[RMDB]
Chemical mapping of a 177-nucleotide RNA with 2A3 and DMS.
RNA sequence: GGGAACGACUCGAGUAGAGUCGAAAACGGGAUCAGCGCGUCAUCGCCCGUGGCGUGCAGGAAGUGCAGCUUCGCGCCGUUCUUCGCCGCCUGGCGCAGGCGCGCCGCGAAGAGCGGAUGAUCGCGAUGGACUAUCACGAUUCGUCGUGAUAGUCCAAAAAGAAACAACAACAACAAC
Reactivity to 2A3 in 0.01 (KOAc 150mM, MgCl2 10mM, bicine 150mM(pH8.5), 24C), signal-to-noise 2, nucleotides 027 to 126: c020g020g090g000a060u050c040a000g040c010g000c020g040u000c020a070u030c040g050c030c000c000g010u020g020g000c050g030u120g000c010a020g100g060a040a020g060u100g110c110a060g030c060u030u090c110g020c050g000c030c020g020u010u050c000u030u030c020g000c000c010g080c000c020u100g120g000c120g020c040a000g120g000c010g000c020g000c000c010g000c010g000a070a050g040a000g010c040g000g010a040u070g000a010u030c070g000c010g180a070
Reactivity to DMS in 0.01 (KOAc 150mM, MgCl2 10mM, bicine 150mM(pH8.5), 24C), signal-to-noise 4, nucleotides 027 to 126: c050g010g010g010a030u000c050a040g000c010g020c010g010u000c010a030u000c120g010c000c010c270g030u000g010g020c010g000u010g030c020a120g010g000a060a040g020u000g000c180a090g030c030u000u020c090g010c090g020c000c000g020u000u000c010u000u000c030g010c030c120g010c100c080u010g030g020c050g000c090a090g010g010c080g000c130g010c070c050g010c010g000a050a050g020a130g010c010g000g000a090u000g010a040u010c000g010c020g010a150
For 2A3, 4,649 sequencing reads were counted.